[RMDB]
An RNA of 170 nucleotides, treated with DMS and 2A3 and read out base by base. Values cover nucleotides 27 to 129. Conditions: 150 mM KOAc, 10 mM MgCl2 and 150 mM bicine (pH 8.5), 24 C. The data come from the RNA Mapping Database (RMDB), library 15KLIB.

RNA sequence: GGGAACGACUCGAGUAGAGUCGAAAAUGGUUGCAAAGAUACGGCAUGCUUGCUCUGCUAUAAGAGGAACCGACUUACUAGAGUUGAAGCUUCUACCGUUGUCUGUGGUGGAAAACGUACGUUUUAUCAGGGAGCUAGUUCGCUAGCUCCAAAAGAAACAACAACAACAAC
Reactivity to DMS in 0.01 (KOAc 150mM, MgCl2 10mM, bicine 150mM(pH8.5), 24C), signal-to-noise 5, nucleotides 027 to 129: u060g000g020u030u010g000c080a030a060a070g050a040u000a050c000g000g040c000a050u030g000c060u020u080g030c030u030c040u030g000c110u030a170u030a080a050g000a140g040g050a090a110c180c040g040a070c030u000u000a000c080u000a060g030a000g030u010u040g000a150a120g030c090u000u030c050u000a140c080c060g000u040u020g030u040c060u040g030u000g000g000u000g020g050a070a030a100a060c050g030u040a030c220g010u040u020u020u010a110u040c180a130g050
Reactivity to 2A3 in 0.01 (KOAc 150mM, MgCl2 10mM, bicine 150mM(pH8.5), 24C), signal-to-noise 3, nucleotides 027 to 129: u090g010g060u090u030g000c080a080a070a060g090a060u080a110c030g030g040c030a000u050g010c040u020u060g000c000u020c020u010g000c000u050a040u050a210a050g040a000g030g000a020a010c040c000g000a000c040u000u020a020c010u040a010g010a000g020u020u070g070a060a020g010c000u020u000c010u030a090c030c040g060u050u030g000u070c140u060g060u040g030g000u060g030g000a020a060a050a020c000g030u090a000c020g000u000u020u090u060a140u110c030a040g020